[RMDB]
RNA sequence: GGGAACGACUCGAGUAGAGUCGAAAAUUGGCACCAAAGGUGCCAAGUCUACAUCCCCGAGUAGAUACACAUCUACCACCAGCAAUCAAUGUCUCAAUAUAUACACAGACUCAGGGGAGAUGAGAUCUAGAGACAACACACUUAAGAUUGCCUACUACAGAAGGAAAAAGUUCGCUUUUUCCUUCUGAAAAGAAACAACAACAACAAC
Reactivity to 2A3 in 0.01 (KOAc 150mM, MgCl2 10mM, bicine 150mM(pH8.5), 24C), signal-to-noise 5, nucleotides 027 to 156: u020u000g010g020c000a020c030c040a220a150a150g030g000u000g000c000c000a000a000g000u000c010u060a070c010a080u040c010c000c010c020g030a030g030u010a010g010a020u040a090c090a010c010a130u010c010u020a020c010c010a030c020c050a010g010c010a010a010u030c010a000a100u070g010u010c010u000c010a120a010u070a020u030a010u020a290c050a040c010a120g030a060c010u020c030a020g050g050g020g000a080g030a060u040g010a010g000a030u010c030u070a030g010a000g080a020c010a080a040c070a010c030a020c080u200u090a080a020g000a010u030u000g000c000c020u050a050c010u060a040
Reactivity to DMS in 0.01 (KOAc 150mM, MgCl2 10mM, bicine 150mM(pH8.5), 24C), signal-to-noise 3, nucleotides 027 to 156: u000u000g000g050c010a010c020c010a100a130a120g100g090u000g010c000c010a000a000g010u010c040u000a120c050a100u010c000c000c030c040g000a090g020u010a030g010a060u000a190c260a110c140a090u000c030u000a060c000c030a070c030c020a120g020c030a050a080u000c020a080a100u010g010u000c000u000c030a080a140u010a210u000a120u000a130c100a100c050a090g010a090c040u000c030a100g030g030g030g000a080g020a090u010g010a090g000a100u000c070u000a110g020a060g020a070c030a060a130c140a080c100a090c070u000u020a120a200g000a070u000u000g010c000c040u000a050c060u000a200